[RMDB]
RNA sequence: GGGAACGACUCGAGUAGAGUCGAAAAGGGGCUACAGACAUUAGCCACUGAAGCACCUGGCCUGAUUCCGAGCUUCACUCCAGGUGUGGGGGUGGGGGUGCUGGGAACCGCUAUAGGCCCUGUAGGCCAGUCAUGAUAGCUUCGGCUAUCAUGACUGAAAAGAAACAACAACAACAAC
Reactivity to DMS in 0.01 (KOAc 150mM, MgCl2 10mM, bicine 150mM(pH8.5), 24C), signal-to-noise 2, nucleotides 027 to 126: g000g000g020g010c010u000a060c050a050g010a130c060a130u020u000a090g010c030c040a030c030u000g000a300a230g010c000a020c020c000u020g020g000c050c050u030g000a050u010u010c120c120g000a160g020c110u030u010c010a020c050u000c010c010a040g010g010u000g020u000g010g000g020g000g030u000g010g010g000g000g030u000g000c060u000g000g000g000a100a130c030c020g020c040u000a120u010a090g010g000c000c020c040u010g010u000a100g000g020c050
Reactivity to 2A3 in 0.01 (KOAc 150mM, MgCl2 10mM, bicine 150mM(pH8.5), 24C), signal-to-noise 1, nucleotides 027 to 126: g000g000g000g000c010u040a040c030a110g160a060c040a080u110u130a080g210c000c000a020c020u000g030a030a000g000c000a010c040c000u040g000g030c010c000u100g060a120u240u000c100c090g110a060g040c030u100u070c000a000c020u040c000c010a010g000g060u070g020u060g080g000g010g020g010u010g050g000g000g020g020u100g000c050u020g000g050g030a060a030c050c020g000c110u100a130u030a290g050g010c080c000c030u030g070u060a060g050g000c060